This 177-nucleotide RNA was probed chemically with DMS. The DMS profile rests on 1,750 reads. Reactivities are given for positions 27 through 126. Source: RMDB library OK2TST, as collected in RNAgym. Reactivities are rounded to 0.1 and cut off at 0 and 3. Conditions: 150 mM KOAc, 10 mM MgCl2 and 150 mM bicine (pH 8.5), 24 C.
[RMDB]
RNA sequence: GGGAACGACUCGAGUAGAGUCGAAAAACUUGAAAUUUGGAGUAAAUCUCCUGGUUGAGUGACAGGUGUUUCGCAGCUGAGCCCUUGAGGAGAUUCUCCAGUUGGGCAGAGACAUCCCUUCCUCAGAUAUUAAUCCGAUCUUCGGAUCGGAUUAAUAAAAAGAAACAACAACAACAAC
Reactivity to DMS in 0.01 (KOAc 150mM, MgCl2 10mM, bicine 150mM(pH8.5), 24C), signal-to-noise 2, nucleotides 027 to 126: a080c040u010u000g000a090a040a060u000u010u000g000g000a040g010u010a090a070a070u000c020u000c000c010u000g000g020u010u000g000a060g000u010g000a140c150a050g000g010u010g010u000u020u000c210g000c080a050g010c070u000g010a300g000c050c030c040u000u000g000a090g000g000a020g000a060u000u000c000u000c010c010a020g010u010u000g000g020g020c070a120g000a060g000a060c080a040u010c010c020c010u000u000c020c010u010c130a080g000a210